Structure probing data (DMS and 2A3) for a 177-nucleotide construct. DMS adducts were read by reverse transcription with MarathonRT.
[RMDB]
RNA sequence: GGGAACGACUCGAGUAGAGUCGAAAACGGGUGUAGGCACGUGUGUGCCAGAGGUGGAAACUGUGCGGAACAGUUGUAGCUGACGGAGAGCUUCUUGGGAACGGAGAUCAUCUGUCCACACGCCUAGCGACCAUGACUCGUUCGCGAGUCAUGGUCGAAAAGAAACAACAACAACAAC
Reactivity to DMS in 0.01 (KOAc 150mM, MgCl2 10mM, bicine 150mM(pH8.5), 24C), signal-to-noise 1, nucleotides 027 to 126: c070g020g010g020u000g030u000a100g020g000c030a020c060g000u000g040u000g000u000g000c080c010a030g000a060g000g020u000g000g010a250a020a060c020u000g010u000g020c280g010g000a120a040c020a000g000u000u000g000u000a160g020c020u010g000a120c120g010g000a100g000a070g010c030u000u000c040u000u010g000g010g150a090a100c230g000g000a040g000a020u000c040a240u000c040u020g010u000c030c070a040c000a080c050g060c030c030u000a060g020
Reactivity to 2A3 in 0.01 (KOAc 150mM, MgCl2 10mM, bicine 150mM(pH8.5), 24C), signal-to-noise 1, nucleotides 027 to 126: c020g030g000g030u040g050u110a020g050g000c010a000c070g210u250g050u090g000u030g080c010c000a000g010a000g050g040u030g020g240a010a100a000c040u060g000u090g000c140g150g120a030a010c020a000g010u030u020g030u040a010g000c030u010g040a020c030g060g000a000g030a020g040c000u010u020c010u040u180g130g000g000a090a020c020g000g000a040g020a040u070c030a080u000c010u000g020u010c030c000a010c000a000c000g010c020c000u020a070g020